RNA sequence: GGGAACGACUCGAGUAGAGUCGAAAACCGUAGGUCCUAAUACUACCAUCGAUCGUAUGCGAAAUGUAUAUUCGAAAGAGUAUACGUAGUAGCAUACGGGAGGUAGUUAGGACCUAAACGGAAAAGUGGUCUGCAUAGUUCGCUAUGCAGACCACAACUUCUAUGCCCUGUUCGCAGGGCAUAGAAGAAAAGAAACAACAACAACAAC
Reactivity to DMS in 0.01 (KOAc 150mM, MgCl2 10mM, bicine 150mM(pH8.5), 24C), signal-to-noise 1, nucleotides 027 to 156: c010c030g000u000a000g010g000u000c000c000u000a030a100u000a170c020u000a000c000c030a300u000c140g010a120u020c000g010u000a000u010g030c020g010a210a300a300u000g000u000a000u010a060u010u010c010g050a240a130a220g010a050g010u010a010u010a020c000g000u000a070g010u000a300g030c010a010u000a020c000g000g000g010a050g000g010u010a020g000u010u000a000g010g010a010c010c000u010a000a000a060c050g010g010a070a110a170a200g050u000g020g010u000c000u000g000c010a030u000a020g040u010u060c300g060c000u000a010u000g020c000a020g000a000c000c000a020c020a000a030
Reactivity to 2A3 in 0.01 (KOAc 150mM, MgCl2 10mM, bicine 150mM(pH8.5), 24C), signal-to-noise 2, nucleotides 027 to 156: c020c000g020u020a020g020g000u010c000c000u070a140a060u120a220c000u000a000c010c010a200u300c020g080a040u030c000g000u000a000u000g010c000g000a010a010a000u080g000u020a000u000a010u010u000c020g040a100a070a040g000a030g010u010a000u010a000c000g000u000a000g000u010a010g000c000a000u000a000c000g010g010g000a020g000g000u000a000g000u000u000a000g000g010a000c000c000u000a000a010a000c000g020g040a010a100a010a140g000u010g000g020u000c010u000g000c000a000u000a000g030u050u050c190g030c210u000a000u000g000c010a010g000a000c000c000a000c000a000a000
Source: RMDB library RNAMAK, as collected in RNAgym. The record gives the reactivity of an RNA of 207 nucleotides to DMS and 2A3. DMS adducts were read by reverse transcription with MarathonRT. The DMS profile rests on 2,290 reads. Reactivities are given for positions 27 through 156.